[RMDB]
RNA sequence: GGGAACGACUCGAGUAGAGUCGAAAACCAUAACAGUUCGCUGUUAUGGACUGUCCGAAUGCGGAAUAAUUAAUCGUCCGCUUACGAUUAAUACCGACUAUAAAGCGUAACACUUCGGUGUUACGAAGCGACUAAAAUACUUCGGUAUUUUAGUCGCAAAAGAAACAACAACAACAAC
Reactivity to DMS in 0.01 (KOAc 150mM, MgCl2 10mM, bicine 150mM(pH8.5), 24C), signal-to-noise 1, nucleotides 027 to 126: c000c000a000u000a000a000c000a020g010u000u030c200g010c010u000g000u020u000a000u000g010g000a020c050u000g010u000c000c000g020a150a160u020g000c010g000g000a230a100u000a090a090u000u000a000a000u000c030g020u000c220c180g010c210u030u010a050c010g000a030u020u000a010a000u020a070c000c000g000a100c170u000a080u000a050a060a110g010c000g010u000a000a010c000a010c000u000u010c220g010g000u000g000u010u010a010c000g020a050a050
Reactivity to 2A3 in 0.01 (KOAc 150mM, MgCl2 10mM, bicine 150mM(pH8.5), 24C), signal-to-noise 2, nucleotides 027 to 126: c000c000a000u010a000a000c000a000g010u040u060c150g120c090u000g000u000u000a010u000g000g030a060c060u080g050u030c000c000g090a170a120u160g010c020g000g060a180a110u200a150a090u100u060a010a030u010c030g050u050c090c050g020c120u030u160a010c000g000a010u010u010a030a000u010a070c010c030g050a060c100u060a050u090a300a130a000g080c020g010u000a000a000c010a010c010u040u090c200g100g000u010g000u030u000a000c000g000a000a000
Chemical mapping of a 177-nucleotide RNA with DMS and 2A3. For 2A3, 1,945 sequencing reads were counted.